[RMDB]
RNA sequence: GGGAACGACUCGAGUAGAGUCGAAAAGAAGGGAAAGGAGACCCAUGGACAGUCUCCAGAGGUUCCUAAGGCCUCGAUCGCGCCUGCUGGGAGGCAGAAUGUCCCGGUUGUCCAUGAAAGAAGAAGAAAAUUAGCAUCCAUUCGUGGAUGCUAAUUUAAAAGAAACAACAACAACAAC
Reactivity to DMS in 0.01 (KOAc 150mM, MgCl2 10mM, bicine 150mM(pH8.5), 24C), signal-to-noise 6, nucleotides 027 to 126: g010a090a080g000g010g010a060a090a110g010g000a030g000a010c010c090c090a060u010g000g010a030c020a120g000u000c010u010c010c020a080g020a070g010g010u000u020c070c130u040a120a170g000g000c010c000u010c020g010a090u030c080g010c110g010c070c010u000g000c020u000g000g020g010a080g000g000c020a090g000a110a070u030g020u000c010c000c010g000g020u010u000g010u000c000c020a020u010g020a130a070a090g000a110a120g020a140a060g020a090
Reactivity to 2A3 in 0.01 (KOAc 150mM, MgCl2 10mM, bicine 150mM(pH8.5), 24C), signal-to-noise 6, nucleotides 027 to 126: g130a070a060g080g020g030a080a090a090g010g010a010g000a010c000c010c070a020u000g000g000a010c000a010g000u000c000u000c010c020a000g020a010g030g030u090u180c040c040u110a080a030g060g000c000c000u030c020g020a080u140c080g010c060g000c160c000u020g010c010u020g000g020g010a030g000g010c030a010g120a170a050u120g040u040c000c000c000g000g010u030u030g000u000c000c010a010u040g070a040a050a070g150a020a010g080a050a010g080a030

Notes
The data come from the RNA Mapping Database (RMDB), library OK1LIB. This 177-nucleotide RNA was probed chemically with DMS and 2A3. Reactivities are given for positions 27 through 126. The DMS profile rests on 15,522 reads. The RNA was probed in 150 mM KOAc, 10 mM MgCl2 and 150 mM bicine (pH 8.5) at 24 C.